The record gives the reactivity of an RNA of 207 nucleotides to 2A3. The reactions ran in a buffer of 150 mM KOAc, 10 mM MgCl2 and 150 mM bicine (pH 8.5), at 24 C. The data come from the RNA Mapping Database (RMDB), library RNAMAK.
RNA sequence: GGGAACGACUCGAGUAGAGUCGAAAAGCGUACUACCCAACUAACCUCCAACAGCGCUUCACGAAUAUAUUUCCCAAAUAGGAAAUAUACUAUGAAGCGACAUGGAGGGUGUUGGGUAUCGCAAACCUGCGGUUGUAGUUCGCUACAACCGCAGGAAGGUUUUUGAUUAGUUCGCUAAUCAAAAACCAAAAGAAACAACAACAACAAC
Reactivity to 2A3 in 0.01 (KOAc 150mM, MgCl2 10mM, bicine 150mM(pH8.5), 24C), signal-to-noise 2, nucleotides 027 to 156: g000c000g010u030a070c070u010a000c080c000c030a000a000c010u040a120a180c000c010u010c010c020a110a100c060a190g060c000g020c000u000u000c010a010c030g120a300a000u000a000u000a000u000u030u020c000c020c040a250a190a110u200a130g000g000a010a000a000u000a010u010a040c030u010a010u040g000a000a000g000c000g010a000c010a020u050g010g000a000g000g010g000u000g000u000u000g000g050g010u050a010u070c000g000c000a020a020a130c000c000u000g000c020g000g020u000u010g010u010a000g030u040u080c250g010c120u000a000c000a000a000c020c000g000c000a000g000g000a000a010